[RMDB]
RNA sequence: GGGAACGACUCGAGUAGAGUCGAAAAAGUGUGAUCAAUUUCUGUUACAUGCAUCAAAUGGAACUUGCUAAUGGUACACAUACCGGUUCAGCAUUUGAUGGUACUAUGUAUGGUGCCUUUAUGGAUAGGACAUAAUGAACUUCGGUUCAUUAUGUCCAAAAGAAACAACAACAACAAC
Reactivity to DMS in 0.01 (KOAc 150mM, MgCl2 10mM, bicine 150mM(pH8.5), 24C), signal-to-noise 2, nucleotides 027 to 126: a090g000u000g020u010g010a010u000c080a130a060u000u000u010c040u000g000u010u010a050c070a030u010g010c110a020u010c020a020a020a030u000g020g000a000a020c050u000u000g020c230u000a100a080u000g010g010u000a080c250a090c140a050u000a070c090c090g020g000u000u000c020a140g010c030a040u000u000u010g000a020u020g000g010u010a020c050u000a030u000g000u010a030u020g020g030u000g000c010c020u000u000u020a060u010g000g000a060u000a080
Reactivity to 2A3 in 0.01 (KOAc 150mM, MgCl2 10mM, bicine 150mM(pH8.5), 24C), signal-to-noise 2, nucleotides 027 to 126: a000g140u090g040u040g020a030u060c040a040a040u020u090u060c030u030g070u040u050a040c030a010u050g060c000a010u010c010a040a000a010u010g010g010a030a020c020u070u160g030c020u070a080a000u030g010g100u090a040c170a020c000a100u090a000c010c020g000g060u070u000c000a150g040c000a060u030u020u050g010a000u010g000g000u030a050c060u030a020u090g070u030a010u020g050g030u070g040c020c000u020u120u010a140u110g080g030a080u130a110
The record gives the reactivity of an RNA of 177 nucleotides to DMS and 2A3. The reactions ran in a buffer of 150 mM KOAc, 10 mM MgCl2 and 150 mM bicine (pH 8.5), at 24 C. For DMS, 1,327 sequencing reads were counted. The data come from the RNA Mapping Database (RMDB), library 15KREP.